[RMDB]
RNA sequence: GGGAACGACUCGAGUAGAGUCGAAAAUGUUGCCGAGAGCAACAGGGCUAGGUUUGCCAACCAGACUGAAGGUGUAGAAUUGUUCUCAUUCAGUGAAUCUACUGAAGACAUUCAACAGAUUGAUAUGGCAUGGUACUCUCUUCGGAGAGUACCAUGCAAAAGAAACAACAACAACAAC
Reactivity to DMS in 0.01 (KOAc 150mM, MgCl2 10mM, bicine 150mM(pH8.5), 24C), signal-to-noise 2, nucleotides 027 to 126: u000g000u010u000g000c000c040g000a150g010a190g030c000a020a020c010a030g020g050g010c020u000a080g000g060u000u000u010g010c050c060a100a150c020c030a090g010a080c080u010g010a060a080g000g010u000g000u000a050g000a010a150u000u000g010u000u000c050u000c070a230u000u000c020a030g000u000g000a110a080u010c020u020a080c050u000g010a010a040g010a060c140a070u000u010c040a040a120c050a000g010a020u000u020g020a090u010a040u010g040
Reactivity to 2A3 in 0.01 (KOAc 150mM, MgCl2 10mM, bicine 150mM(pH8.5), 24C), signal-to-noise 2, nucleotides 027 to 126: u000g010u010u010g020c020c060g280a170g000a010g150c010a010a000c020a000g000g030g000c040u080a080g000g190u100u210u200g020c000c000a010a040c020c000a000g040a060c030u050g010a090a000g150g050u070g000u050a010g030a070a120u210u100g110u140u020c040u010c020a030u060u000c000a000g000u000g080a080a240u020c020u040a020c000u040g020a020a020g030a000c030a050u070u030c010a020a020c010a030g060a120u070u120g040a060u170a100u270g070
This 177-nucleotide RNA was probed chemically with DMS and 2A3. It was measured as part of the RMDB library OK2TST. 2A3 adducts were read by reverse transcription with SuperScript II with manganese. The reactions ran in a buffer of 150 mM KOAc, 10 mM MgCl2 and 150 mM bicine (pH 8.5), at 24 C.